[RMDB]
RNA sequence: GGGAACGACUCGAGUAGAGUCGAAAAGAGUCACACUUCGGUGUGACUCAAAUAAGCUGACCAGCUAUGAGGACUACAUCGUCAUGCACAAAUAGAAUAAAAAAACCCUAAUCUUCGGAUUAGGGAACAUUUAUAUGUUCUUCGGAACAUAUAAAUGAAAAGAAACAACAACAACAAC
Reactivity to DMS in 0.01 (KOAc 150mM, MgCl2 10mM, bicine 150mM(pH8.5), 24C), signal-to-noise 5, nucleotides 027 to 126: g000a020g010u000c000a010c000a010c000u000u010c220g030g010u010g020u000g000a010c020u000c000a010a050a050u000a090a060g010c050u000g010a160c060c040a100g000c030u000a060u000g010a070g000g000a070c070u010a070c100a180u000c060g010u000c040a030u000g010c060a080c110a040a060a090u000a100g010a100a080u040a000a000a070a060a100a060a130c000c000c000u000a010a000u000c000u010u010c210g020g010a010u000u000a000g010g000g000a010a020
Reactivity to 2A3 in 0.01 (KOAc 150mM, MgCl2 10mM, bicine 150mM(pH8.5), 24C), signal-to-noise 5, nucleotides 027 to 126: g010a000g010u010c000a000c010a000c010u050u100c210g020g000u000g000u000g000a000c000u020c000a000a000a000u010a000a000g020c030u010g050a070c020c040a000g000c020u060a060u110g060a040g100g010a030c040u080a030c160a130u070c030g120u010c020a040u090g050c050a030c040a070a110a050u220a140g140a100a060u280a190a140a030a030a020a040a050c010c000c000u010a000a000u000c010u010u050c230g090g000a000u000u010a000g000g030g000a000a000